The record gives the reactivity of an RNA of 207 nucleotides to 2A3. It was measured as part of the RMDB library OK3TST. The reactions ran in a buffer of 150 mM KOAc, 10 mM MgCl2 and 150 mM bicine (pH 8.5), at 24 C.
[RMDB]
RNA sequence: GGGAACGACUCGAGUAGAGUCGAAAAAUUGUAUCUCGGUCUUGGCGUAGUUGAAUCACCGCCGUAAUCUGUGGUGGGCUCUGUACUUGUCCGGGCUCCAUGUCCUGUGGUGUGCUUUCCACCGGUGGUAGAAUUGGCCUUUCCACCUGUUGAGGUGGUCUGAACUCUGUUUCGACAGAGUUCAGACAAAAGAAACAACAACAACAAC
Reactivity to 2A3 in 0.01 (KOAc 150mM, MgCl2 10mM, bicine 150mM(pH8.5), 24C), signal-to-noise 1, nucleotides 027 to 156: a000u130u120g020u050a070u050c050u050c040g040g030u000c020u000u070g050g000c000g040u040a070g000u040u070g110a140a020u210c040a030c070c000g090c010c010g010u040a040a040u040c110u040g040u050g070g010u020g000g010g000c020u000c020u000g040u050a100c030u090u070g000u020c000c020g010g020g050c030u040c060c040a040u080g110u090c010c020u030g060u060g000g000u040g000u060g090c080u080u060u000c040c070a030c030c010g010g000u030g010g000u030a080g020a140a140u050u080g050g000c050c000u030u070u010c030c010a080c000c000u070g110u050u070g120a080g000g020u070g010